[RMDB]
Structure probing data (DMS) for a 177-nucleotide construct.

RNA sequence: GGGAACGACUCGAGUAGAGUCGAAAAUUUUUGUUGGAGUCAAUAUUACGUUUAUACCAAUGCAUUUUCUAGGCCUUGCUGGGAUGCCUCGCCGAAUUCCAGAUUACCCGGACGCCUAUGCUGGGUGCAUACGGUUUGUGUUCGCACAAACCGUAUGAAAAGAAACAACAACAACAAC
Reactivity to DMS in 0.01 (KOAc 150mM, MgCl2 10mM, bicine 150mM(pH8.5), 24C), signal-to-noise 1, nucleotides 027 to 126: u010u010u000u000u000g010u010u010g010g020a230g020u010c120a060a090u010a120u010u020a140c100g010u020u000u010a070u000a120c060c020a050a050u010g020c070a030u000u020u020u000c090u010a070g010g000c010c050u010u010g020c020u020g000g000g010a060u010g020c040c010u010c180g000c060c030g040a060a070u000u010c020c030a070g000a140u010u010a080c030c020c020g010g020a060c200g000c110c100u010a080u010g000c030u000g010g010g000u000g010
Source: RMDB library OK2TST, as collected in RNAgym. The reactions ran in a buffer of 150 mM KOAc, 10 mM MgCl2 and 150 mM bicine (pH 8.5), at 24 C.